The record gives the reactivity of an RNA of 177 nucleotides to 2A3 and DMS. Conditions: 150 mM KOAc, 10 mM MgCl2 and 150 mM bicine (pH 8.5), 24 C. The 2A3 profile rests on 1,704 reads. The data come from the RNA Mapping Database (RMDB), library OK2TRN. DMS adducts were read by reverse transcription with MarathonRT.

RNA sequence: GGGAACGACUCGAGUAGAGUCGAAAACACAGGUUCUCAAUGUAAGCCAGCUUACUUGCCAAAAACAUGAGUGUGCCCAGGUGUACCUAUCUUUUAUAAAUCUGUGCUGAGACAGUCCCUUGGGAAAUGAGUCUUGAAAUUUCGAUUUCAAGACUCAAAAAGAAACAACAACAACAAC
Reactivity to 2A3 in 0.01 (KOAc 150mM, MgCl2 10mM, bicine 150mM(pH8.5), 24C), signal-to-noise 2, nucleotides 027 to 126: c050a010c010a000g030g040u100u040c030u030c010a030a060u120g020u070a040a050g030c020c040a030g000c060u050u120a080c000u070u110g020c040c010a110a070a030a020a000c040a110u130g020a060g100u100g050u080g030c000c000c000a040g050g030u060g030u080a090c020c000u050a060u150c030u050u200u040u030a220u080a140a110a050u010c010u030g010u010g020c060u030g030a020g000a070c020a020g030u050c000c000c070u040u050g100g030g010a050a050a020
Reactivity to DMS in 0.01 (KOAc 150mM, MgCl2 10mM, bicine 150mM(pH8.5), 24C), signal-to-noise 3, nucleotides 027 to 126: c040a070c060a070g000g010u000u000c010u000c020a110a070u010g020u000a050a070g020c070c110a140g010c020u000u000a030c060u000u010g020c100c080a030a070a080a100a080c070a040u010g000a090g010u000g010u010g000c020c020c040a060g000g000u000g010u000a040c030c040u000a070u000c030u010u000u000u010a100u020a070a070a080u000c040u000g020u000g010c060u000g000a100g000a060c210a060g000u000c020c040c020u010u010g020g010g010a070a110a150